Background: Structure probing data (DMS) for a 177-nucleotide construct. DMS adducts were read by reverse transcription with MarathonRT. The data come from the RNA Mapping Database (RMDB), library TTRINS. The DMS profile rests on 481 reads. The RNA was probed in 150 mM KOAc, 10 mM MgCl2 and 150 mM bicine (pH 8.5) at 24 C.
[RMDB]
RNA sequence: GGGAACGACUCGAGUAGAGUCGAAAAGAUAUGGAUCACUCCCCACCCGAACUCUGCCUAAGACAGUUCGACAGUCGGAAACGACUGUCGAAUCGAGGCAACGUGAGUUCGGAGGUGAUCCUAAGUCCAGGUAGAAGACGUUCGCGUCUUCUACCUGAAAAGAAACAACAACAACAAC
Reactivity to DMS in 0.01 (KOAc 150mM, MgCl2 10mM, bicine 150mM(pH8.5), 24C), signal-to-noise 1, nucleotides 027 to 126: g000a150u000a150u020g000g000a020u000c020a000c000u000c160c000c030c020a300c160c020c000g000a000a050c020u000c000u000g050c050c000u000a300a110g020a150c300a150g000u000u000c000g050a000c000a000g000u000c000g000g000a110a100a230c000g000a050c000u000g000u020c000g000a020a000u000c020g000a020g000g030c000a020a050c260g060u000g020a000g000u000u000c030g020g020a030g020g050u000g000a000u000c000c000u000a130a030g020u050c160